RNA sequence: GGGAACGACUCGAGUAGAGUCGAAAACUAGUGGGCUCACUAAACAGUCUGUCAAACCGGGACACUUUAAUCAACAUUUCUACAAGCACUUGCUUGAUAGUGAUCUUUUAGACCAACUUGGUAUUGAUCCCAAGUAACUAUUCGUAGUUACUUGGGAAAAAGAAACAACAACAACAAC
Reactivity to 2A3 in 0.01 (KOAc 150mM, MgCl2 10mM, bicine 150mM(pH8.5), 24C), signal-to-noise 5, nucleotides 027 to 126: c020u020a010g040u050g010g030g030c080u120c230a020c040u090a060a120a030c030a020g040u020c030u090g080u060c040a080a010a050c050c030g010g030g020a020c020a000c060u070u090u170a060a050u120c030a020a050c000a070u030u090u100c010u070a060c030a060a020g030c060a100c280u280u270g040c010u040u040g040a130u080a020g030u040g020a070u000c030u040u150u020u090a040g030a030c000c000a030a130c090u060u110g060g010u060a140u090u120g080a050
Reactivity to DMS in 0.01 (KOAc 150mM, MgCl2 10mM, bicine 150mM(pH8.5), 24C), signal-to-noise 5, nucleotides 027 to 126: c040u000a060g040u000g010g010g010c030u000c050a060c060u010a120a090a130c100a070g020u010c040u000g010u010c040a040a100a100c090c080g010g000g000a090c080a090c130u000u000u000a050a050u000c080a040a070c110a040u000u000u000c020u010a050c050a020a030g020c030a190c220u000u010g010c030u010u000g010a080u000a030g010u000g000a040u000c050u000u000u000u000a110g020a080c060c040a050a100c110u010u010g000g010u010a110u010u000g010a190